[RMDB]
RNA sequence: GGGAACGACUCGAGUAGAGUCGAAAAAAGGUUAUUUUAAUGAUUGUGUCUGGCCUAAAGUACCAUUAGCUUCCAGUGGAGUUUAGAAUGUGGAUGGAUCCUGAAAGGUAUUCCCCAGAGGUUUGGACUCUGUGGUAGGAUUCGUCCUACCACAGAGAAAAGAAACAACAACAACAAC
Reactivity to 2A3 in 0.01 (KOAc 150mM, MgCl2 10mM, bicine 150mM(pH8.5), 24C), signal-to-noise 2, nucleotides 027 to 126: a000a000g300g000u120u170a120u170u190u170u090a120a020u100g110a130u080u120g050u040g000u050c010u000g000g070c050c000u090a150a130a000g010u020a120c000c000a120u030u040a070g030c030u050u060c000c000a180g060u070g110g040a000g000u020u140u090a160g000a240a140u120g070u100g020g020a020u020g030g130a020u030c040c000u070g000a000a060a000g000g040u060a040u000u000c130c000c000c000a000g050a040g120g000u100u030u090g050g020a000
Reactivity to DMS in 0.01 (KOAc 150mM, MgCl2 10mM, bicine 150mM(pH8.5), 24C), signal-to-noise 2, nucleotides 027 to 126: a090a120g020g000u010u000a100u020u000u010u000a040a110u070g000a030u020u020g010u000g000u030c010u000g020g020c110c010u030a010a060a090g000u010a130c070c010a090u030u010a090g050c070u000u000c060c030a010g000u010g000g000a100g000u010u020u010a070g000a030a160u020g020u000g000g000a040u010g000g020a000u000c070c000u000g000a070a090a070g010g010u000a120u010u000c030c000c000c080a120g000a110g050g000u000u000u000g000g000a150